[RMDB]
Overview: Source: RMDB library OK1LIB, as collected in RNAgym. Structure probing data (2A3) for a 177-nucleotide construct. The RNA was probed in 150 mM KOAc, 10 mM MgCl2 and 150 mM bicine (pH 8.5) at 24 C.
RNA sequence: GGGAACGACUCGAGUAGAGUCGAAAAGUGAGACCGUGGAUCAGACCUCGCACAGCAUGAGUUUUAUUUCAGAUGCGAACGUACUGGCACUGCAUCGGUUGCUGUGGACGCAUCAGGAGAAGAUCGGCGAGCCGGAGGUGUUCGCACCUCCGGCUCGAAAAGAAACAACAACAACAAC
Reactivity to 2A3 in 0.01 (KOAc 150mM, MgCl2 10mM, bicine 150mM(pH8.5), 24C), signal-to-noise 1, nucleotides 027 to 126: g200u190g090a140g000a000c000c000g000u030g000g020a000u040c030a040g010a000c000c000u000c000g000c030a080c000a000g100c000a140u030g070a080g240u100u040u010u180a250u030u060u100c000a010g000a080u000g000c000g010a030a000c000g000u060a140c170u030g180g000c020a000c080u070g060c000a000u060c080g000g110u140u190g030c160u210g000u000g010g040a000c040g070c000a140u070c040a040g210g120a000g000a150a020g080a170u000c030g010g000